[RMDB]
An RNA of 207 nucleotides, treated with 2A3 and read out base by base. It was measured as part of the RMDB library M2RFOK. The 2A3 profile rests on 1,679 reads. The RNA was probed in 150 mM KOAc, 10 mM MgCl2 and 150 mM bicine (pH 8.5) at 24 C.

RNA sequence: GGGAACGACUCGAGUAGAGUCGAAAAACUGCCAUACGUGGCAGAAACACGCCUUACCAGGACUAAACAGCGUGUCUAAAAAACAGUCCUUCAUACCUGAUCUGGAGGGUAGCUCAGGAAUACUAAAAAAAUCGGGUGAAGUUCGCUUCACCCGAAACUAUAGAACGUGCUUCGGCACGUUCUAUAGAAAAGAAACAACAACAACAAC
Reactivity to 2A3 in 0.01 (KOAc 150mM, MgCl2 10mM, bicine 150mM(pH8.5), 24C), signal-to-noise 3, nucleotides 027 to 156: a010c000u000g020c000c000a000u030a070c220g090u040g000g010c000a000g040a000a010a000c000a000c020g010c000c000u040u050a030c040c050a010g000g010a000c000u050a090a050a060c030a010g010c000g000u000g050u050c120u050a020a020a020a010a000a000c050a010g000u010c050c000u040u110c090a080u080a180c000c000u010g010a030u030c010u020g040g050a060g080g010g000u030a010g000c000u000c010a000g020g060a040a130u160a150c090u170a040a010a020a010a000a030a190u030c000g000g000g000u000g000a000a000g000u050u130c180g020c080u000u000c010a000c000c000c000g000a000a010a000